Structure probing data (DMS) for a 177-nucleotide construct. The data come from the RNA Mapping Database (RMDB), library OK2TST. For DMS, 1,415 sequencing reads were counted. Reactivities are given for positions 27 through 126. Conditions: 150 mM KOAc, 10 mM MgCl2 and 150 mM bicine (pH 8.5), 24 C.

RNA sequence: GGGAACGACUCGAGUAGAGUCGAAAAAGUGCUGUCACCAUUGCAGCCCAGGCUUGUUUCCUGGUCAGGGAACCACAACACCCAUCUGUUGGUUGUCAUACUGUGGCGGCUGCAAAAAAAAAAAAUGUGAUAUAAUUGGUUUCGACCAAUUAUAUCAAAAAGAAACAACAACAACAAC
Reactivity to DMS in 0.01 (KOAc 150mM, MgCl2 10mM, bicine 150mM(pH8.5), 24C), signal-to-noise 2, nucleotides 027 to 126: a040g010u000g030c040u000g020u000c050a100c030c040a110u000u000g010c050a050g060c070c020c040a020g000g020c090u030u000g000u010u010u000c020c020u000g010g000u020c090a180g010g010g000a030a040c040c030a020c060a020a060c030a050c020c010c050a110u020c150u000g010u000u010g000g020u000u000g010u010c100a130u000a060c160u000g000u000g000g000c050g050g000c010u000g020c000a000a000a000a020a000a010a000a070a100a050a080a140u000g010